[RMDB]
Chemical mapping of a 177-nucleotide RNA with 2A3 and DMS. For 2A3 the reverse transcriptase was SuperScript II with manganese. High DMS reactivity at an A or C suggests that its Watson-Crick edge is free.
RNA sequence: GGGAACGACUCGAGUAGAGUCGAAAAAGCGAAGACGGUGAGCCCAUGGAUCUUUUCGAGUAUCAAGCCAAGGAGUUAUUCGCCAAGCACAACGUGCCCAGCACGCCGGGUCGGGUGACCGACACAGGAAGUAGUAAAACUUCGGUUUUACUACUUCAAAAGAAACAACAACAACAAC
Reactivity to 2A3 in 0.01 (KOAc 150mM, MgCl2 10mM, bicine 150mM(pH8.5), 24C), signal-to-noise 7, nucleotides 027 to 126: a010g060c040g030a060a010g070a040c050g010g040u030g030a010g020c000c020c010a030u050g050g010a060u080c030u060u150u110u120c080g020a030g030u100a060u230c050a090a000g030c020c020a040a050g100g000a110g040u090u060a100u100u060c030g000c020c010a050a010g060c030a030c010a160a130c070g010u020g010c020c050c010a020g000c030a010c020g030c030c030g100g000g010u010c000g000g020g010u040g030a070c000c020g010a010c020a000c000a080g150
Reactivity to DMS in 0.01 (KOAc 150mM, MgCl2 10mM, bicine 150mM(pH8.5), 24C), signal-to-noise 9, nucleotides 027 to 126: a100g010c030g010a080a080g010a080c050g010g010u000g010a120g020c050c010c030a100u000g010g000a080u000c030u000u000u000u010c090g010a110g000u010a080u010c080a080a100g010c040c050a070a100g000g000a060g000u000u000a110u010u010c030g010c030c040a100a130g020c090a060c110a070a100c070g010u000g010c010c060c050a110g010c040a060c070g010c050c040g000g010g020u000c010g000g000g010u010g000a160c010c010g000a030c050a050c140a100g000